[RMDB]
RNA sequence: GGGAACGACUCGAGUAGAGUCGAAAAUAAGUUUGUCCAAAUCCCUGCUCAGUGUGUCCGUGACCCUGUGGGAUUUUGUUUGUCAAAUACCCCCUGUAAUGUCUGUCAAUAUUGGAUUGGAUAUGGGAAACCUCCACGUUCGCGUGGAGGAAAAGAAACAACAACAACAAC
Reactivity to 2A3 in 0.01 (KOAc 150mM, MgCl2 10mM, bicine 150mM(pH8.5), 24C), signal-to-noise 4, nucleotides 027 to 129: u200a030a030g030u010u030u040g000u000c000c000a000a000a000u000c020c000c010u030g080c050u010c100a000g020u000g020u050g030u130c050c140g180u120g030a030c030c000c000u020g020u080g040g000g000a000u010u000u090u020g090u060u070u140g050u000c000a000a000a000u130a100c010c000c000c000c000u040g020u110a080a070u050g030u000c030u000g020u030c000a070a040u100a080u200u250g120g000a000u100u170g010g010a020u010a090u130g050g020g000a040a030a030
Reactivity to DMS in 0.01 (KOAc 150mM, MgCl2 10mM, bicine 150mM(pH8.5), 24C), signal-to-noise 3, nucleotides 027 to 129: u070a090a180g020u030u030u020g010u040c120c030a000a000a000u030c020c000c040u030g050c180u080c100a030g050u050g030u070g000u050c030c100g030u020g030a030c030c100c000u030g030u030g000g000g030a050u030u060u000u070g040u050u040u030g000u010c040a050a020a020u050a190c060c010c000c030c080u040g000u030a060a050u000g000u020c030u000g000u000c060a080a090u000a000u090u000g030g020a000u020u030g030g010a080u010a050u020g050g040g050a040a020a050